[RMDB]
RNA sequence: GGGAACGACUCGAGUAGAGUCGAAAAAGGUCAGAUAAUCGCAUAGAAAACCUUAGGGAGUGCAGCAAGUUGCAGAACUCCCAAAAUCGAAGGAUUGGUGUUCGUAAUAAUUCUGGAUACGUUGGAGUUAGCUUCUAUAAACCUAACGGGAAAUGGCAGAUGUUGAGUUAUUCGUAACUCAACAUCUAAAAGAAACAACAACAACAAC
Reactivity to 2A3 in 0.01 (KOAc 150mM, MgCl2 10mM, bicine 150mM(pH8.5), 24C), signal-to-noise 1, nucleotides 027 to 156: a010g000g000u020c010a010g020a130u110a060a050u090c060g000c140a080u050a180g200a000a090a020a020c020c050u050u060a090g000g000g000a000g030u020g020c030a000g010c090a140a110g020u240u160g000c000a030g060a150a020c000u000c000c000c000a000a030a000a030u050c010g030a070a020g040g000a040u060u100g030g030u040g000u050u100c000g020u000a040a040u030a070a030u080u020c010u070g070g000a030u060a140c010g010u010u060g050g030a180g020u050u060a000g020c000u080u080c030u060a150u110a050a070a040c020c020u020a100a000c000g040g000g110a020a050a050u080g020g000c020
Reactivity to DMS in 0.01 (KOAc 150mM, MgCl2 10mM, bicine 150mM(pH8.5), 24C), signal-to-noise 2, nucleotides 027 to 156: a050g000g000u000c020a090g010a160u010a070a050u010c090g000c050a140u000a140g010a140a070a100a090c030c050u000u010a090g060g000g020a080g000u000g030c020a110g020c000a090a150g000u000u000g050c030a110g020a020a050c010u000c020c000c000a000a010a030a130u000c090g020a100a080g000g000a110u010u000g010g020u000g010u000u000c020g020u000a070a120u000a070a050u010u000c040u030g010g000a190u000a040c090g020u020u010g010g000a300g010u000u000a050g000c030u000u010c040u000a150u000a080a020a050c030c000u000a040a100c130g010g000g020a020a060a070u010g020g020c170